[RMDB]
RNA sequence: GGGAACGACUCGAGUAGAGUCGAAAAACGAGUCGUACGCGACUCGAAUGGUAUUGUCGGCGUAAAAGAACAAGACGUCACCGGACGCGACCGGGCUAAAAAGCGAAACGUCAUCUACGGAUGACGAAAAACGGACCUGGGUUCGCCCAGGUCCGAAUCCAUCUAAUUUCUUCGGAAAUUAGAUGGAAAAAGAAACAACAACAACAAC
Reactivity to 2A3 in 0.01 (KOAc 150mM, MgCl2 10mM, bicine 150mM(pH8.5), 24C), signal-to-noise 2, nucleotides 027 to 156: a000c020g010a000g010u000c010g000u030a030c200g000c010g120a000c000u000c000g020a010a030u100g010g060u090a080u110u200g130u120c050g010g040c010g020u050a020a090a090a080g150a130a040c070a080a000g120a040c020g000u000c030a000c000c000g010g020a010c000g000c000g020a010c020c000g000g000g030c050u050a030a030a000a000a000g020c010g060a070a030a010c030g000u000c000a000u010c000u000a030c190g090g010a000u000g000a000c000g030a020a020a000a020a000c010g010g010a000c000c000u010g000g060g000u020u050c120g010c000c000c000a000g000g000u000c000c000g000a000a000
Reactivity to DMS in 0.01 (KOAc 150mM, MgCl2 10mM, bicine 150mM(pH8.5), 24C), signal-to-noise 1, nucleotides 027 to 156: a170c020g000a020g000u000c000g000u000a240c160g040c010g000a030c000u000c010g000a090a080u010g020g020u000a050u000u000g010u000c000g040g000c050g030u020a080a120a180a130g030a070a140c070a110a060g000a110c090g010u010c030a160c090c030g000g010a050c040g000c130g000a040c010c030g000g000g000c060u000a030a040a100a100a060g000c020g000a100a000a100c010g000u000c010a020u000c010u000a140c300g050g020a020u020g000a030c020g010a000a030a060a120a130c000g030g050a000c000c050u050g020g000g020u000u010c300g030c010c000c050a000g020g000u010c000c000g010a000a010